[RMDB]
RNA sequence: GGGAACGACUCGAGUAGAGUCGAAAACUUGGUGCCAACAGGCGAAGAAGGACGCGGCAAGCUGCGAAAAGCCUCGGGAAGCUGCAAGCAAGCGAUGAUCCGGGGAUAUCCGAAUGGGGUAACCUGACUUUCACUAUCGCUUCGGCGAUAGUGAAAGAAAAGAAACAACAACAACAAC
Reactivity to DMS in 0.01 (KOAc 150mM, MgCl2 10mM, bicine 150mM(pH8.5), 24C), signal-to-noise 2, nucleotides 027 to 126: c050u030u060g020g020u000g000c030c020a050a130c180a050g000g000c080g020a120a160g030a200a050g060g020a030c020g000c000g060g000c000a070a160g030c030u000g000c040g010a000a030a010a050g020c000c000u000c000g000g000g000a010a030g030c000u020g020c060a020a300g020c060a090a040g000c000g020a030u060g000a030u050c010c020g000g000g000g020a030u020a030u000c030c000g030a090a110u060g020g020g000g020u000a010a150c000c010u000g010a130
Reactivity to 2A3 in 0.01 (KOAc 150mM, MgCl2 10mM, bicine 150mM(pH8.5), 24C), signal-to-noise 2, nucleotides 027 to 126: c020u040u080g030g020u070g030c000c010a050a070c070a270g120g000c050g050a030a010g030a030a060g040g000a000c000g010c020g030g030c010a000a000g000c000u000g020c000g010a000a000a000a000g050c010c000u010c000g000g000g010a000a010g010c000u050g000c030a000a060g020c020a000a000g010c020g080a160u030g000a000u000c000c000g010g030g000g000a000u010a010u010c000c000g040a100a080u090g010g000g000g040u020a030a080c000c000u010g040a050